[RMDB]
RNA sequence: GGGAACGACUCGAGUAGAGUCGAAAAGCGAAAGCCUGGAAUAACCCUGCCAAGAAGCUUUAAGAUUCAUCACAUCGAACUUGAUACAUACAGUACAGCACCUUGAAAACAAAUUAUCUGCUAGUUCCUUACGACGUGUUUUCGAACACGUCGUAAGAAAAGAAACAACAACAACAAC
Reactivity to DMS in 0.01 (KOAc 150mM, MgCl2 10mM, bicine 150mM(pH8.5), 24C), signal-to-noise 2, nucleotides 027 to 126: g000c080g010a080a130a180g000c000c030u030g000g000a050a130u100a230a030c040c010c030u000g040c030c010a120a010g000a100a060g010c040u000u040u000a060a080g000a030u000u000c080a070u000c000a110c050a050u010c080g000a090a110c040u100u020g010a060u000a020c050a050u060a050c110a080g000u050a080c040a170g020c020a030c070c090u040u000g000a040a020a130a090c270a010a060a040u000u000a160u040c020u010g020c010u010a140g050u010u000c070
Reactivity to 2A3 in 0.01 (KOAc 150mM, MgCl2 10mM, bicine 150mM(pH8.5), 24C), signal-to-noise 4, nucleotides 027 to 126: g040c010g070a180a040a000g000c000c030u030g000g040a070a010u080a060a020c010c000c040u020g050c030c000a090a000g070a090a030g050c000u060u060u020a090a020g040a090u030u040c010a010u110c020a060c010a080u030c070g000a020a040c000u020u110g010a000u030a090c010a050u070a030c020a040g040u020a030c000a020g040c020a030c010c000u070u080g060a050a020a040a010c080a030a080a020u150u040a080u080c040u030g010c000u010a020g040u040u030c000